[RMDB]
RNA sequence: GGGAACGACUCGAGUAGAGUCGAAAAGUGGAUUUGUUCGCAAAUCCACAAAUCCCAACAAGCCUGGCUGGCAGCCUAAGAACCGAGCUACGCGGCGUAGCAAAAGGUUACACUUCGGUGUAACCAAGGGUUAUAAUAGCUUCGGCUAUUAUAACCCAAAAGAAACAACAACAACAAC
Reactivity to DMS in 0.01 (KOAc 150mM, MgCl2 10mM, bicine 150mM(pH8.5), 24C), signal-to-noise 2, nucleotides 027 to 126: g010u010g000g000a030u000u000u000g000u000u010c220g050c000a000a020a000u010c000c000a000c000a010a120a160u000c000c000c000a120a130c240a060a130g000c050c010u000g010g010c010u010g000g010c080a060g000c020c030u000a110a110g000a130a080c080c020g020a130g020c020u010a000c040g000c050g050g000c050g000u000a030g010c070a030a070a080a070g000g010u000u000a030c000a020c000u000u010c200g000g010u000g000u010a000a010c000c010a060a080
Reactivity to 2A3 in 0.01 (KOAc 150mM, MgCl2 10mM, bicine 150mM(pH8.5), 24C), signal-to-noise 2, nucleotides 027 to 126: g020u020g010g000a020u000u000u040g020u020u020c070g030c120a000a010a010u000c010c010a000c000a010a010a000u020c010c010c000a010a040c030a010a020g080c020c040u030g060g040c000u040g070g030c040a030g030c000c010u090a100a050g040a080a000c020c060g030a040g000c000u020a010c010g040c070g220g000c070g010u020a010g000c010a020a020a000a130g000g000u000u010a000c000a000c000u050u120c220g140g000u020g000u020a000a000c000c000a010a060